Chemical mapping of a 177-nucleotide RNA with 2A3 and DMS.
For DMS the reverse transcriptase was MarathonRT.
The RNA was probed in 150 mM KOAc, 10 mM MgCl2 and 150 mM bicine (pH 8.5) at 24 C.
The data come from the RNA Mapping Database (RMDB), library M2PK90.
The DMS profile rests on 838 reads.
RNA sequence: GGGAACGACUCGAGUAGAGUCGAAAAUCAAAUAAAGCGCACCAAUAUGGAGGUGCGCAACCAGCGUGUCCAAGGAUCACGCAUCCACGCGUCUACCAAGACGCGAAAGGUAUUACAUAUAAAAAAACUCCUAAAUUAGAUUCGUCUAAUUUAGGAGAAAAGAAACAACAACAACAAC
Reactivity to 2A3 in 0.01 (KOAc 150mM, MgCl2 10mM, bicine 150mM(pH8.5), 24C), signal-to-noise 2, nucleotides 027 to 126: u020c000a010a000a080u230a070a120a030g010c010g030c010a010c020c000a000a060u160a150u270g210g030a070g000g040u000g000c000g000c000a000a000c000c020a010g030c000g000u010g000u020c030c030a140a150g080g010a100u200c000a010c010g010c000a030u040c020c020a010c000g030c000g000u010c000u020a140c040c060a070a010g010a000c000g000c000g000a040a040a000g000g010u040a050u080u150a030c010a030u180a010u280a200a120a020a010a000a020a080
Reactivity to DMS in 0.01 (KOAc 150mM, MgCl2 10mM, bicine 150mM(pH8.5), 24C), signal-to-noise 1, nucleotides 027 to 126: u010c060a080a130a190u000a070a160a090g000c000g000c020a000c000c000a130a190u000a040u010g020g010a210g000g000u000g020c000g050c000a020a000c060c040a130g000c010g030u000g000u000c010c100a110a170g060g000a010u000c000a000c020g050c000a110u000c030c000a130c010g000c000g000u000c000u000a250c300c300a050a040g000a000c000g000c000g000a010a080a010g000g000u000a110u000u010a090c020a040u000a090u020a010a000a110a050a010a120a140